This 177-nucleotide RNA was probed chemically with 2A3. The RNA was probed in 150 mM KOAc, 10 mM MgCl2 and 150 mM bicine (pH 8.5) at 24 C. For 2A3 the reverse transcriptase was SuperScript II with manganese.
RNA sequence: GGGAACGACUCGAGUAGAGUCGAAAAGAAAGAAAGAAACGUCCUGCGAGGUGUCUUGCAGGCCGUCAUGCAGGCCACACUGACGGAAACGUUGCAGGUCGUCUUGCAGGGCGUCUCGCAAGACGAAAGGCUGCUGAAAGUUCGCUUUCAGCAGCCUAAAAGAAACAACAACAACAAC
Reactivity to 2A3 in 0.01 (KOAc 150mM, MgCl2 10mM, bicine 150mM(pH8.5), 24C), signal-to-noise 1, nucleotides 027 to 126: g120a000a060a010g070a000a090a000g040a000a080a000c000g010u010c000c000u000g000c010g010a000g030g000u010g000u000c000u000u000g010c040a010g010g000c000c000g000u020c000a000u070g020c060a040g100g020c100c000a070c010a010c060u090g020a010c020g030g000a020a220a020c100g090u090u020g000c000a000g010g020u000c000g000u010c000u000u000g030c030a000g000g000g000c000g000u020c000u010c000g000c020a020a030g050a000c040g140a140a010